[RMDB]
RNA sequence: GGGAACGACUCGAGUAGAGUCGAAAACUCCACGCUGGGUAAUGGACGACGGCGGCGUGUGGCGAACAGGGAUACCGGUAGUCAGUGUCUGGAAAAUCCCAAGGGGCGGCGGAGCUAGCACCCCGACAAAACGGGCACAAGUUCGCUUGUGCCCGAAUCGUAACUGUAAGUUCGCUUACAGUUACGAAAAAGAAACAACAACAACAAC
Reactivity to DMS in 0.01 (KOAc 150mM, MgCl2 10mM, bicine 150mM(pH8.5), 24C), signal-to-noise 1, nucleotides 027 to 156: c060u000c010c010a070c070g020c020u000g010g000g000u000a110a130u010g020g010a070c050g040a100c060g000g000c080g010g010c060g000u000g030u000g000g000c070g000a090a120c070a080g010g000g020a100u000a090c010c010g010g020u000a070g020u000c040a090g000u000g010u000c000u000g000g000a130a060a060a240u010c010c000c010a050a080g000g010g030g020c060g000g000c000g010g000a140g030c040u000a060g000c050a030c020c020c000c010g000a070c050a060a000a140a200c000g020g000g000c000a000c010a050a030g010u000u000c280g000c000u010u000g000u000g000c010c010c000g030a000a000
Reactivity to 2A3 in 0.01 (KOAc 150mM, MgCl2 10mM, bicine 150mM(pH8.5), 24C), signal-to-noise 3, nucleotides 027 to 156: c020u020c000c000a010c050g040c030u050g000g000g080u100a100a070u080g090g030a030c030g010a020c030g040g030c020g000g000c020g010u090g010u020g040g020c050g020a090a030c060a080g010g010g010a020u050a140c000c010g030g010u060a030g030u020c030a020g050u020g030u080c010u010g030g000a030a080a020a080u010c000c010c030a060a080g020g000g000g010c060g030g010c050g030g050a050g070c030u020a020g000c020a040c010c000c000c000g010a010c020a000a100a030a030c020g010g000g000c010a000c000a000a000g020u080u100c170g030c120u000u000g000u000g010c000c000c000g000a000a000